[RMDB]
RNA sequence: GGGAACGACUCGAGUAGAGUCGAAAAUCACUGACUGCCUUAACUACACCUCACUCUCCAUCUGUUGAAAUCCUACCUGUUGUUCCAGUCCCCUCACAGAUUAUAGGGCCUUUCUCUGACCCUACCCCCUCACAUGGUAGUUCGCUACCAUGUGAGGAAAAGAAACAACAACAACAAC
Reactivity to DMS in 0.01 (KOAc 150mM, MgCl2 10mM, bicine 150mM(pH8.5), 24C), signal-to-noise 2, nucleotides 027 to 126: u000c040a110c060u000g020a070c070u000g000c060c000u010u000a070a090c090u000a080c090a080c050c020u030c030a040c070u000c040u000c040c040a030u000c050u000g010u030u020g010a060a090a100u000c040c020u000a060c040c050u010g000u000u010g020u000u000c030c010a070g010u010c030c020c010c030u010c030a080c170a090g000a100u000u010a080u000a010g000g000g000c040c010u000u010u000c050u000c100u030g020a050c030c020c020u000a090c020c010c050